This 207-nucleotide RNA was probed chemically with 2A3. The reactions ran in a buffer of 150 mM KOAc, 10 mM MgCl2 and 150 mM bicine (pH 8.5), at 24 C. The data come from the RNA Mapping Database (RMDB), library M2RFPK.
RNA sequence: GGGAACGACUCGAGUAGAGUCGAAAACAACCCACCUCCUACUCAAUACGUCCUCGUCGUACAGAACGGUAACAUGUUUUCCGAACAUCCGCGCUUGGGUAUACGAGUAUACACCUUACCCAACCCUCCAACCACCUAAAGUUCGCUUUAGGUGGAAGUAGGUGCAUAGGUUCGCCUAUGCACCUACAAAAGAAACAACAACAACAAC
Reactivity to 2A3 in 0.01 (KOAc 150mM, MgCl2 10mM, bicine 150mM(pH8.5), 24C), signal-to-noise 3, nucleotides 027 to 156: c020a010a040c010c000c010a040c000c040u020c000c010u060a070c030u040c060a070a090u080a100c060g050u060c010c020u030c040g060u020c020g030u070a050c010a070g050a130a020c010g010g000u060a080a000c050a130u100g070u030u030u030u080c050c020g040a060a010c040a080u060c020c050g060c050g040c040u030u070g020g010g030u050a050u030a080c070g020a020g080u040a030u040a060c080a050c000c010u030u050a010c000c000c000a020a010c010c000c020u000c020c010a060a100c010c000a010c010c000u000a010a000a020g010u060u090c130g030c130u000u000u000a000g020g000u000g000g000a000a000